Structure probing data (2A3 and DMS) for a 177-nucleotide construct. 2A3 is a SHAPE reagent: it acylates the 2'-hydroxyl of flexible nucleotides of all four kinds.

[RMDB]
RNA sequence: GGGAACGACUCGAGUAGAGUCGAAAAAUGAAGCACCCUCGCUUCCGCCGCACCUACUAUUGCUCCAUAUGCAGCGAGCCUCAUCAGUCCAUCUUCUUGGCGAUCCUAAUCAGAUCCCUGCCAUUGAACACCUUCGAAUGUUCGCAUUCGAAGGUGUAAAAGAAACAACAACAACAAC
Reactivity to 2A3 in 0.01 (KOAc 150mM, MgCl2 10mM, bicine 150mM(pH8.5), 24C), signal-to-noise 1, nucleotides 027 to 126: a070u070g050a060a020g000c020a080c040c030c000u010c070g040c070u050u000c010c050g070c020c010g000c020a050c030c000u070a080c010u050a140u050u190g020c000u020c000c020a060u080a020u240g060c000a000g000c010g080a050g030c000c010u030c010a100u020c010a010g030u000c010c020a050u010c060u110u000c030u030u060g030g000c000g000a020u000c010c020u050a010a040u090c010a020g010a070u040c000c020c070u010g040c030c040a030u020u060g070a030
Reactivity to DMS in 0.01 (KOAc 150mM, MgCl2 10mM, bicine 150mM(pH8.5), 24C), signal-to-noise 2, nucleotides 027 to 126: a070u000g000a060a030g030c090a110c080c060c040u000c120g010c060u000u000c030c050g020c050c020g010c070a110c020c050u000a070c110u000a080u010u000g020c040u000c000c040a100u000a080u000g010c070a060g030c070g000a090g000c020c030u000c060a080u010c040a080g040u010c040c000a050u000c060u010u010c040u000u000g010g020c080g000a040u010c010c010u000a070a070u000c150a200g000a050u010c010c110c040u000g010c040c080a100u000u000g010a070
The reactions ran in a buffer of 150 mM KOAc, 10 mM MgCl2 and 150 mM bicine (pH 8.5), at 24 C. It was measured as part of the RMDB library OK2TRN.